Annotation:
An RNA of 177 nucleotides, treated with 2A3 and DMS and read out base by base.

RNA sequence: GGGAACGACUCGAGUAGAGUCGAAAACUUGAGAAUUCUGAGUGAGGGUACUGUAGCAUCGGGUUACUGUACACCAAUCCAGACGAUUCUCAGGUGGUUCGACGCCGGUGAACAGCUAUGGCCUCUGCCAAAAGUAGUGGUUCGCCACUACUUUUGGAAAAGAAACAACAACAACAAC
Reactivity to 2A3 in 0.01 (KOAc 150mM, MgCl2 10mM, bicine 150mM(pH8.5), 24C), signal-to-noise 1, nucleotides 027 to 126: c010u020u000g000a010g000a000a040u280u040c010u010g090a120g140u000g000a010g000g000g020u000a010c010u020g000u020a010g000c010a060u230c160g010g300g240u010u030a000c000u020g010u020a010c190a270c060c000a010a010u000c000c010a020g000a020c030g060a040u000u000c000u000c010a000g000g000u000g000g110u070u080c010g040a030c050g040c030c040g080g000u070g040a070a040c030a050g000c010u030a070u150g040g010c000c030u030c060u090g090
Reactivity to DMS in 0.01 (KOAc 150mM, MgCl2 10mM, bicine 150mM(pH8.5), 24C), signal-to-noise 2, nucleotides 027 to 126: c000u010u000g030a010g000a030a010u010u000c010u000g010a110g010u000g000a300g000g020g010u000a010c000u000g000u000a020g020c000a270u000c220g020g040g030u000u000a010c000u000g000u000a010c010a140c010c010a030a180u020c010c000a020g030a060c300g000a060u000u000c000u000c020a010g000g000u000g000g030u000u010c020g000a020c090g010c020c040g000g000u000g000a070a080c110a100g000c030u000a050u000g010g000c020c050u010c100u000g000
Conditions: 150 mM KOAc, 10 mM MgCl2 and 150 mM bicine (pH 8.5), 24 C.